The record gives the reactivity of an RNA of 177 nucleotides to 2A3 and DMS.
For DMS the reverse transcriptase was MarathonRT.
Source: RMDB library OK2TST, as collected in RNAgym.
The reactions ran in a buffer of 150 mM KOAc, 10 mM MgCl2 and 150 mM bicine (pH 8.5), at 24 C.
For 2A3 the reverse transcriptase was SuperScript II with manganese.
Reactivities are given for positions 27 through 126.
For DMS, 1,730 sequencing reads were counted.
RNA sequence: GGGAACGACUCGAGUAGAGUCGAAAACUUUUGACCAUCCUGAACUUGUCAAAUUAGGUCACUGUAAGAAAAUUGAGGAGAUCAUUAUCGGUGAAGAUAAAAUGAUCAAGUUUUCUGGCGUUGAAGACUCACUGAAAAUGUUCGCAUUUUCAGUGAGAAAAGAAACAACAACAACAAC
Reactivity to 2A3 in 0.01 (KOAc 150mM, MgCl2 10mM, bicine 150mM(pH8.5), 24C), signal-to-noise 1, nucleotides 027 to 126: c000u000u040u090u120g040a050c000c010a020u050c000c000u030g000a080a040c010u040u050g010u050c000a000a000a200u050u110a080g010g040u000c010a010c060u100g000u110a060a020g050a070a130a020a060u080u170g040a140g050g080a170g070a040u040c020a050u000u120a030u100c060g000g030u110g180a060a010g030a090u030a020a080a020a110u060g000a010u030c000a040a040g030u000u060u000u000c060u010g110g010c040g050u010u090g050a010a010g010a060
Reactivity to DMS in 0.01 (KOAc 150mM, MgCl2 10mM, bicine 150mM(pH8.5), 24C), signal-to-noise 2, nucleotides 027 to 126: c060u000u000u000u000g010a070c040c030a100u010c060c050u000g010a050a040c100u000u010g010u000c020a030a050a200u000u000a060g010g010u010c010a060c050u010g010u010a080a090g000a080a040a060a060u000u020g010a120g020g010a130g020a050u010c010a060u010u000a040u010c020g010g010u020g010a090a090g010a070u000a030a010a050a100u010g000a020u000c020a070a040g010u000u010u000u000c040u000g010g020c220g020u000u000g000a080a100g010a190